[RMDB]
Record summary:
Source: RMDB library TTRDEL, as collected in RNAgym. An RNA of 177 nucleotides, treated with 2A3 and DMS and read out base by base. For 2A3 the reverse transcriptase was SuperScript II with manganese. DMS adducts were read by reverse transcription with MarathonRT.
RNA sequence: GGGAACGACUCGAGUAGAGUCGAAAAGAUAUGGACAUGGAACUACCAACCAAUAAGCGUUGAAAUCGGAAACGAUGGAGCUUGAUGGUUGGCCAUGUCCUAAGUCAAAGCACGGUUCGCCGUGCAAGGAUUAGGGUAAGUUCGCUUACCCUAAUCCAAAAGAAACAACAACAACAAC
Reactivity to 2A3 in 0.01 (KOAc 150mM, MgCl2 10mM, bicine 150mM(pH8.5), 24C), signal-to-noise 5, nucleotides 027 to 126: g020a030u050a030u140g010g000a000c010a010u000g010g010a080a040c060u160a070c300c000a010a000c000c010a010a090u100a100a010g030c060g300u300u080g050a060a050a010u010c010g000g020a070a040a030c010g000a010u000g000g050a020g000c000u020u050g040a050u070g050g000u000u010g030g000c000c000a000u000g000u010c000c000u000a020a010g000u000c030a070a050a050g000c000a000c010g010g070u060u140c300g030c100c000g000u000g000c010a000a020
Reactivity to DMS in 0.01 (KOAc 150mM, MgCl2 10mM, bicine 150mM(pH8.5), 24C), signal-to-noise 4, nucleotides 027 to 126: g010a030u010a300u000g000g010a010c000a010u000g000g000a060a030c070u030a300c040c010a000a000c010c000a020a160u000a010a010g000c000g010u000u020g000a090a110a040u000c000g000g000a090a030a200c000g010a010u000g000g000a080g000c000u000u000g010a060u000g000g000u000u000g000g020c000c000a000u000g000u000c000c000u000a000a070g000u010c030a050a060a120g010c000a010c010g010g000u000u010c230g020c000c000g010u000g010c010a030a050